RNA sequence: GGGAACGACUCGAGUAGAGUCGAAAAGAUAUGGACUAGCAGGCUAGACGUGGCCAAGACUCCUUCUACUCGGAAACGAGUAGAAGGAGUCUUGGAAUCGUCUUGGACCCUGCCUAGUCCUAAGUCAUCACAAUAACGAGUUCGCUCGUUAUUGUGAAAAAGAAACAACAACAACAAC
Reactivity to DMS in 0.01 (KOAc 150mM, MgCl2 10mM, bicine 150mM(pH8.5), 24C), signal-to-noise 3, nucleotides 027 to 126: g000a070u020a300u020g000g000a010c000u000a040g020c010a020g010g010c020u000a010g020a010c000g020u000g000g010c000c010a010a020g000a010c010u000c000c000u000u000c000u000a020c010u000c000g000g000a110a100a250c010g020a010g030u000a000g000a000a020g000g010a000g010u000c000u000u000g000g000a040a040u000c010g010u000c000u000u010g060g000a210c300c020c010u000g010c210c020u010a000g000u000c000c000u010a030a100g020u010c050a190
Conditions: 150 mM KOAc, 10 mM MgCl2 and 150 mM bicine (pH 8.5), 24 C. This 177-nucleotide RNA was probed chemically with DMS. DMS adducts were read by reverse transcription with MarathonRT. Source: RMDB library TTRINS, as collected in RNAgym.